[RMDB]
RNA sequence: GGGAACGACUCGAGUAGAGUCGAAAAGAAGGGUGACAGCCCUUGAUACUGUAGUGGAAAUUAUAAAUAAGAAGAGUUCUGAGUUGCUUAAGCAGAACUAAAAUAAAAAGACAAGCAUUAUUACAAACAUGGCGAGGUAAGUUCGCUUACCUCGCAAGAUACCAUUCAACUUCGGUUGAAUGGUAUCAAAAGAAACAACAACAACAAC
Reactivity to DMS in 0.01 (KOAc 150mM, MgCl2 10mM, bicine 150mM(pH8.5), 24C), signal-to-noise 1, nucleotides 027 to 156: g030a080a030g000g010g110u000g020a130c180a180g050c020c050c080u000u000g000a130u000a040c060u000g030u000a040g000u000g040g010a030a020a100u020u000a030u000a080a030a150u000a140a160g010a090a220g000a140g000u000u000c040u010g030a110g000u000u000g010c060u000u010a090a150g020c030a080g000a030a070c030u010a040a040a050a090u010a040a060a110a120a240g010a180c050a070a080g020c000a040u010u000a060u000u050a130c120a040a010a100c030a020u020g000g000c000g000a060g000g000u000a020a020g010u000u010c300g020c010u000u000a010c000c000u010c000g040c000a000a030
Reactivity to 2A3 in 0.01 (KOAc 150mM, MgCl2 10mM, bicine 150mM(pH8.5), 24C), signal-to-noise 4, nucleotides 027 to 156: g080a000a010g010g000g010u050g030a030c040a040g060c010c020c000u000u020g020a020u040a030c050u060g050u110a050g010u060g010g070a040a050a020u120u090a070u180a190a110a050u200a060a040g060a040a030g020a020g080u010u020c010u010g050a040g040u120u060g080c030u070u040a060a010g010c010a000g000a020a010c040u060a010a060a000a020u090a020a070a000a020a010g040a020c030a020a000g000c000a010u020u100a040u050u120a180c090a070a110a000c030a070u090g090g000c000g000a000g000g000u000a000a000g000u010u080c160g030c090u000u000a000c000c000u010c000g000c000a000a000